[RMDB]
RNA sequence: GGGAACGACUCGAGUAGAGUCGAAAAGUCAUGGACACGGUCAGCGAAGACCUCGAACGCAAGAUCGCCAUGAUGACCUUCUCGGACGUACAGCGUGAGUAUCCUCAUGUGCUGGAGAUGGUCGACGUGGAACAGUUCACCUUCAGCAACGUCUGUGUCAUUCAGCAGGAUUCGUCCUGCUGAAUGAAAAAGAAACAACAACAACAAC
Reactivity to DMS in 0.01 (KOAc 150mM, MgCl2 10mM, bicine 150mM(pH8.5), 24C), signal-to-noise 2, nucleotides 027 to 156: g010u000c010a020u010g000g010a080c070a060c070g000g040u010c030a300g000c000g020a140a150g020a120c120c030u010c050g000a080a240c040g000c060a070a210g000a070u000c010g020c020c020a050u050g010a060u000g010a120c060c030u000u010c010u000c020g000g030a090c030g020u010a170c180a250g010c080g000u000g010a040g010u010a090u000c190c060u000c050a010u020g000u000g010c020u000g000g000a050g010a070u000g010g020u000c020g000a090c080g000u000g020g000a060a080c040a220g000u000u000c010a030c000c010u000u000c010a050g000c040a180a040c070g000u000c010u000g020u000g030
Reactivity to 2A3 in 0.01 (KOAc 150mM, MgCl2 10mM, bicine 150mM(pH8.5), 24C), signal-to-noise 5, nucleotides 027 to 156: g030u010c000a000u010g010g010a040c070a020c200g020g000u010c020a020g010c030g070a110a070g130a220c030c080u110c070g060a150a040c030g000c060a100a060g010a030u030c010g000c010c000a000u000g000a030u050g020a010c000c000u100u080c060u020c010g030g030a030c030g030u110a070c050a080g050c030g000u010g020a010g000u190a170u260c030c040u020c000a010u010g050u080g020c020u010g010g000a010g000a020u110g080g000u080c090g020a050c050g020u160g070g100a150a100c040a070g010u090u070c010a010c010c000u010u010c010a020g000c020a010a040c040g020u010c020u020g060u030g040
Structure probing data (DMS and 2A3) for a 207-nucleotide construct. Values cover nucleotides 27 to 156. The 2A3 profile rests on 4,655 reads. Conditions: 150 mM KOAc, 10 mM MgCl2 and 150 mM bicine (pH 8.5), 24 C. It was measured as part of the RMDB library OK3TST. DMS adducts were read by reverse transcription with MarathonRT.